[RMDB]
RNA sequence: GGGAACGACUCGAGUAGAGUCGAAAAGCACAGAGGAUGCUGAGCAGACAGGACAGAGGCGAGCGAGCCUGGCACCAGCGCGACGCAGCAUGGCAGAGGAAGCUAGCCAGGUGGGCGACAGAGGAUGAGCAGCACAGCCCGUACCCAGCAGCCAGGGCAGUAGGACUCUUUUCGAAGAGUCCUACUGAAAAGAAACAACAACAACAAC
Reactivity to DMS in 0.01 (KOAc 150mM, MgCl2 10mM, bicine 150mM(pH8.5), 24C), signal-to-noise 1, nucleotides 027 to 156: g040c050a140c100a140g010a140g020g000a090u000g000c010u010g000a080g000c070a170g000a130c020a120g010g000a080c020a130g000a130g100g020c040g010a160g010c080g030a200g010c000c010u030g090g020c020a120c100c020a050g030c050g040c020g010a140c090g030c070a190g000c060a080u020g010g030c060a160g010a120g000g000a140a100g000c070u040a060g020c050c060a050g010g020u000g020g010g030c080g020a110c050a090g000a140g020g010a060u000g010a060g050c030a090g010c010a080c160a140g010c020c010c000g000u020a070c000c000c000a110g010c020a080g040c000c000a140g000g020g010
Reactivity to 2A3 in 0.01 (KOAc 150mM, MgCl2 10mM, bicine 150mM(pH8.5), 24C), signal-to-noise 2, nucleotides 027 to 156: g030c020a030c020a060g090a020g040g020a050u030g000c050u070g030a040g000c030a010g040a060c040a040g000g070a010c040a040g120a030g010g030c020g010a020g030c050g000a020g020c030c000u000g010g000c000a050c100c030a060g000c040g000c030g070a050c080g010c040a050g000c030a050u080g080g000c000a010g010a020g110g000a060a020g030c020u040a030g020c030c000a010g000g020u060g030g020g000c060g040a030c040a030g060a020g040g030a020u050g040a020g010c020a000g000c010a010c030a010g010c030c000c010g020u060a070c010c000c030a040g010c020a000g070c060c020a010g000g010g030